[RMDB]
RNA sequence: GGGAACGACUCGAGUAGAGUCGAAAAUGGCUGGGGUGACUGAGGGUCAGGACACCAGGGAAGCCACGGGACCCUCCGGACAGGGGAGCAAUGGUGAUGCCAGGCAGAGGCACCGGGAGCCAGGCAGAACCAUUGCGAUUUUCGAAUCGCAAUGGUUAAAAGAAACAACAACAACAAC
Reactivity to 2A3 in 0.01 (KOAc 150mM, MgCl2 10mM, bicine 150mM(pH8.5), 24C), signal-to-noise 8, nucleotides 027 to 126: u080g030g000c040u030g040g000g000g050u040g030a070c030u030g020a060g070g090g040u060c020a020g040g050a040c010a020c050c020a020g040g020g030a070a020g030c010c010a020c030g040g010g040a040c010c000c000u010c010c010g040g040a050c030a080g010g020g010g010a040g050c040a040a150u080g050g020u090g030a050u080g050c010c010a020g030g000c020a020g030a100g120g000c030a030c030c010g020g030g010a000g010c010c010a020g020g000c020a020g030
Reactivity to DMS in 0.01 (KOAc 150mM, MgCl2 10mM, bicine 150mM(pH8.5), 24C), signal-to-noise 9, nucleotides 027 to 126: u000g010g010c030u000g010g010g010g020u000g010a130c050u000g010a120g010g010g010u010c020a090g010g010a140c060a070c040c030a110g010g010g010a130a110g000c020c020a090c100g000g000g000a130c040c010c010u000c020c060g010g010a090c150a100g000g000g010g010a120g010c090a070a060u010g000g010u000g010a120u000g010c010c020a080g010g010c050a070g000a160g000g010c050a070c060c040g000g000g000a130g000c020c020a050g000g010c070a070g000